[RMDB]
RNA sequence: GGGAACGACUCGAGUAGAGUCGAAAAAGGGGUAUUCUCAAAGGAAGCUUUUGCAGUGACGCCCAUGUAAGUGGGAUAUAACAACAGAACUCGUAUGAGUAGCCUAAUUCUGCAACCCUCUUUAGGGAAUAAGGCGCUAUUUCGAUAGCGCCUUAUUAAAAGAAACAACAACAACAAC
Reactivity to 2A3 in 0.01 (KOAc 150mM, MgCl2 10mM, bicine 150mM(pH8.5), 24C), signal-to-noise 3, nucleotides 027 to 126: a000g030g010g000g000u070a160u170u060c010u020c000a050a060a010g030g000a130a010g050c010u000u110u060u050g000c050a020g000u010g060a030c050g020c000c000c000a000u070g140u110a140a080g000u010g000g000g000a000u000a010u080a070a090c050a040a030c010a030g030a100a060c010u030c000g080u300a110u230g000a000g000u020a010g000c000c000u070a100a140u030u000c010u030g080c030a060a110c000c000c020u010c000u140u250u300a060g000g010g000
Reactivity to DMS in 0.01 (KOAc 150mM, MgCl2 10mM, bicine 150mM(pH8.5), 24C), signal-to-noise 4, nucleotides 027 to 126: a060g000g010g000g020u000a090u030u030c000u000c020a040a090a220g030g000a050a110g000c260u000u000u010u000g000c080a100g000u000g000a170c260g000c010c000c000a000u020g010u070a060a170g000u000g000g000g000a010u030a060u030a250a090c100a060a140c090a050g000a060a010c010u000c020g000u010a110u060g010a040g010u000a100g000c060c020u000a110a090u010u010c010u000g000c090a070a200c090c060c030u000c180u000u000u020a060g000g000g000
About this RNA
An RNA of 177 nucleotides, treated with 2A3 and DMS and read out base by base. For DMS the reverse transcriptase was MarathonRT. For 2A3 the reverse transcriptase was SuperScript II with manganese. As a SHAPE reagent, 2A3 marks flexible, mostly unpaired nucleotides at the ribose 2'-OH.